RNA sequence: GGGAACGACUCGAGUAGAGUCGAAAACUGCUUUGUGACUUAAACAAACUUACGCACAUAUGAAAAGUAAGAUCAGACAACUCAGAAGAAAAACGAUAUCCACUAAAAACUAUGUCAACAUUUUCAUUUAGUGCUCUGGCUGUAACAUAGGAUUAAACCUAAUAGCAUCAUUCGUGAUGCUAUUAGGAAAAGAAACAACAACAACAAC
Reactivity to DMS in 0.01 (KOAc 150mM, MgCl2 10mM, bicine 150mM(pH8.5), 24C), signal-to-noise 2, nucleotides 027 to 156: c060u000g000c030u000u000u010g020u000g030a130c090u010u000a040a090a240c020a110a070a070c050u000u000a070c040g040c040a100c030a180u000a120u020g010a090a060a030a170g010u000a080a140g020a130u000c100a220g030a140c050a050a080c060u010c090a110g000a150a090g000a080a050a030a070a060c050g030a090u010a100u000c030c030a120c030u000a030a050a090a090a060c030u000a030u000g010u000c040a070a070c070a040u000u000u020u010c040a080u000u000u000a090g020u010g000c010u010c050u030g020g040c030u000g010u010a020a060c040a090u000a090g010g000a150u000u010a080a100a130
Reactivity to 2A3 in 0.01 (KOAc 150mM, MgCl2 10mM, bicine 150mM(pH8.5), 24C), signal-to-noise 5, nucleotides 027 to 156: c010u020g030c010u030u060u110g040u020g070a160c020u100u140a140a110a050c080a060a110a030c010u090u050a040c070g030c050a020c020a140u170a090u100g150a120a170a010a000g020u030a050a000g020a070u080c010a020g060a070c010a030a040c080u060c100a070g020a160a020g050a040a300a020a010a000c020g000a000u050a030u070c000c020a040c080u100a060a040a040a080a040c040u060a080u090g040u070c030a040a090c010a170u050u030u060u090c050a040u020u080u220a040g010u020g000c010u010c020u020g040g010c030u050g020u090a050a010c020a060u070a080g020g060a020u210u260a130a060a040